[RMDB]
RNA sequence: GGGAACGACUCGAGUAGAGUCGAAAAACUGAUGCAGUGGGAGGCGACCGAUUGAAGCCAAUUGCAGACAUCAUGUGUGACUGAGUAUUGGUGUAGGCGAUAGCCUAAAAUCACCCGCCAGCAGAUAGUACUUACCAGGAUUCGUCCUGGUAAGUACAAAAGAAACAACAACAACAAC
Reactivity to 2A3 in 0.01 (KOAc 150mM, MgCl2 10mM, bicine 150mM(pH8.5), 24C), signal-to-noise 6, nucleotides 027 to 126: a000c030u040g030a030u050g000c010a010g020u020g020g000g020a020g030g010c030g030a050c040c010g230a290u040u050g040a060a000g000c000c000a000a010u030u070g000c000a000g040a040c010a020u110c080a130u200g170u090g010u020g090a070c000u010g000a030g160u070a030u040u040g040g000u300g000u170a030g040g000c010g040a060u130a030g000c000c000u040a070a050a000a050u130c040a020c010c000c000g010c020c000a020g000c010a010g010a090u160a040
Reactivity to DMS in 0.01 (KOAc 150mM, MgCl2 10mM, bicine 150mM(pH8.5), 24C), signal-to-noise 5, nucleotides 027 to 126: a120c050u020g000a120u010g010c030a190g030u010g020g000g020a080g020g010c010g000a110c270c050g020a080u020u000g010a110a300g000c000c020a010a010u000u070g010c000a000g000a110c020a010u020c030a110u030g020u040g040u010g010a100c020u010g000a070g000u010a010u010u000g000g000u000g000u000a170g000g000c020g000a080u000a140g030c000c000u000a020a050a060a070u020c150a300c030c030c030g010c030c030a130g000c030a050g000a070u030a130